[RMDB]
RNA sequence: GGGAACGACUCGAGUAGAGUCGAAAACAGUGGCGUUUCGACGCCACUGAAAAAGCGUACUACACAAGACAUGCUGACUAUCUCAUCCCAAAUAGGAUGAGCCGAGGUUUAGCAACAGCUUGUGUAUCGCAAAAAGCAGAUUCUUCGGAAUCUGCAAACCUUCCUUCUACUUCGGUAGAAGGAAGGUAAAAGAAACAACAACAACAAC
Reactivity to 2A3 in 0.01 (KOAc 150mM, MgCl2 10mM, bicine 150mM(pH8.5), 24C), signal-to-noise 2, nucleotides 027 to 156: c010a000g000u010g030g010c020g000u030u090u160c220g120a000c000g000c000c090a040c030u030g030a060a000a000a000a000g000c000g020u050a030c040u000a000c000a000c010a000a030g030a060c000a060u020g000c000u000g000a010c010u050a010u120c000u000c030a010u020c010c040c040a210a300a090u300a050g000g020a000u000g000a000g090c070c070g300a280g100g000u080u120u300a000g000c010a000a120c040a030g040c010u020u000g010u000g010u010a010u120c000g000c020a050a140a000a000a000g000c000a000g000a000u000u000c000u010u100c180g090g000a000a000u000c000u000g000c000a010a010
Reactivity to DMS in 0.01 (KOAc 150mM, MgCl2 10mM, bicine 150mM(pH8.5), 24C), signal-to-noise 1, nucleotides 027 to 156: c020a040g020u020g000g030c010g090u010u000u010c210g000a070c000g010c040c000a000c040u000g000a020a030a100a040a140g000c030g000u000a110c070u000a000c000a000c000a050a000g010a090c040a300u000g090c020u020g000a010c000u000a160u000c020u000c000a020u000c000c000c000a100a140a300u020a020g010g000a060u000g010a000g030c210c070g020a190g000g000u020u000u000a000g010c020a050a150c090a180g000c000u000u000g030u000g010u000a010u000c010g000c010a010a100a110a110a070g000c000a000g020a020u000u000c000u000u040c270g010g000a020a010u000c000u010g000c010a000a000